[RMDB]
RNA sequence: GGGAACGACUCGAGUAGAGUCGAAAAUUCGCUGGAGAUCGGCCUGUCGCUUGCGGUAUUCGGAAUCUUGCACGCCCUCGCUCAAGCCUUCGUCACUCCAAACGUUUCGGCGAGAAGCAGGCCAUUAAAUUUACUCGAAUUUCGAUUCGAGUAAAUUAAAAGAAACAACAACAACAAC
Reactivity to DMS in 0.01 (KOAc 150mM, MgCl2 10mM, bicine 150mM(pH8.5), 24C), signal-to-noise 5, nucleotides 027 to 126: u010u000c050g020c040u020g010g000a070g010a080u000c100g010g010c020c010u010g020u000c180g010c050u000u010g030c060g010g020u000a070u000u010c130g000g020a130a100u000c050u000u000g010c080a090c080g000c040c140c020u000c060g010c020u000c100a060a130g010c020c070u000u000c050g000u000c070a070c060u010c050c070a060a060a120c130g010u010u000u010c130g000g020c020g010a060g000a100a100g010c030a030g000g000c020c030a080u020u000a030
Reactivity to 2A3 in 0.01 (KOAc 150mM, MgCl2 10mM, bicine 150mM(pH8.5), 24C), signal-to-noise 3, nucleotides 027 to 126: u040u000c020g010c040u050g090g040a060g000a120u110c060g030g000c010c000u050g030u070c040g010c050u010u050g030c040g050g040u080a090u070u140c030g040g090a070a080u030c010u080u190g040c040a010c060g020c030c000c000u000c010g020c000u030c040a050a060g000c010c000u030u060c020g030u020c020a030c100u010c030c030a100a030a000c060g010u000u030u080c060g050g000c010g000a030g020a070a010g030c010a000g030g040c000c010a020u050u110a060